[RMDB]
RNA sequence: GGGAACGACUCGAGUAGAGUCGAAAAGGCGAUGAUGGUGAGCACUUUCAUGAUCUCGUUCAUGCGGUUGCUCACGCUGGAGAGGUACACGUCGAGGAGGCCGCUCGCCACAUCGCGGAGGGUCUCCGACGCGGUAGGAAUUCGUUCCUACCGCGUCAAAAGAAACAACAACAACAAC
Reactivity to DMS in 0.01 (KOAc 150mM, MgCl2 10mM, bicine 150mM(pH8.5), 24C), signal-to-noise 9, nucleotides 027 to 126: g010g010c010g010a030u000g010a120u000g020g010u000g000a020g020c010a180c030u000u000u010c020a080u000g000a030u000c120u000c100g010u000u000c010a020u010g020c300g010g000u000u000g020c120u000c080a080c020g020c040u000g000g000a050g000a030g010g010u000a080c150a110c230g010u010c110g010a130g010g000a030g010g000c080c090g000c010u000c000g010c000c030a050c060a020u000c040g020c010g010g000a060g010g000g000u000c010u000c030c200
Reactivity to 2A3 in 0.01 (KOAc 150mM, MgCl2 10mM, bicine 150mM(pH8.5), 24C), signal-to-noise 9, nucleotides 027 to 126: g120g000c010g020a020u060g020a060u050g040g020u010g000a000g000c010a010c020u040u100u080c040a050u090g050a060u020c030u030c110g210u090u020c030a050u210g010c000g040g040u160u190g050c040u060c070a030c010g000c010u000g010g020a040g000a010g030g020u130a100c110a020c140g150u120c060g030a110g030g000a010g020g010c080c090g100c040u000c000g010c000c000a040c010a040u050c020g000c010g000g030a020g020g020g020u000c020u000c030c030
Chemical mapping of a 177-nucleotide RNA with DMS and 2A3. It was measured as part of the RMDB library OK2TST. The DMS profile rests on 32,516 reads. For DMS the reverse transcriptase was MarathonRT. 2A3 is a SHAPE reagent: it acylates the 2'-hydroxyl of flexible nucleotides of all four kinds.